About this RNA
The record gives the reactivity of an RNA of 207 nucleotides to 2A3 and DMS. The RNA was probed in 150 mM KOAc, 10 mM MgCl2 and 150 mM bicine (pH 8.5) at 24 C. For 2A3, 3,386 sequencing reads were counted. It was measured as part of the RMDB library OK3TST.
[RMDB]
RNA sequence: GGGAACGACUCGAGUAGAGUCGAAAACGCUCACAGCAUGAGAGAGAUCCAUGGUAUAGCUGGGACCAGCCGGGCCUGAGGUUGAACUGGGGUGAACCGAUGCACUGGCACCUAGACAUGUACAACAGGAACCGUGUGGAUACAUCCCCCACACCUGUAACAGUACUCUAUUCGUAGAGUACUGUUAAAAAGAAACAACAACAACAAC
Reactivity to 2A3 in 0.01 (KOAc 150mM, MgCl2 10mM, bicine 150mM(pH8.5), 24C), signal-to-noise 4, nucleotides 027 to 156: c070g010c000u020c010a110c040a060g090c030a070u120g010a030g010a000g000a000g020a160u040c040c010a050u080g000g000u060a060u090a100g030c020u020g030g010g060a070c040c050a020g020c010c020g030g030g000c020c040u080g060a060g000g040u020u110g060a120a050c050u080g050g000g000g000u060g070a030a020c020c000g030a040u090g010c000a030c120u030g020g010c030a080c020c000u010a040g050a080c050a070u120g040u080a050c030a080a020c000a060g010g030a030a030c080c060g020u010g000u010g020g000a000u030a180c040a170u070c010c010c000c010c000a010c000a000c000c010u050g010
Reactivity to DMS in 0.01 (KOAc 150mM, MgCl2 10mM, bicine 150mM(pH8.5), 24C), signal-to-noise 4, nucleotides 027 to 156: c050g000c020u010c040a160c010a140g060c030a300u000g000a100g010a070g010a110g010a040u000c010c010a080u010g010g040u000a050u000a070g030c030u000g010g040g000a090c030c000a090g020c020c020g020g020g020c060c030u030g010a140g020g000u000u000g020a060a120c050u030g010g010g000g050u000g000a070a090c020c010g000a200u000g020c020a060c040u000g010g020c040a120c030c020u000a050g010a070c070a110u000g010u010a080c030a050a080c020a080g000g010a100a110c070c030g010u010g020u000g000g010a130u000a050c040a150u000c000c030c010c020c000a030c020a040c020c050u000g000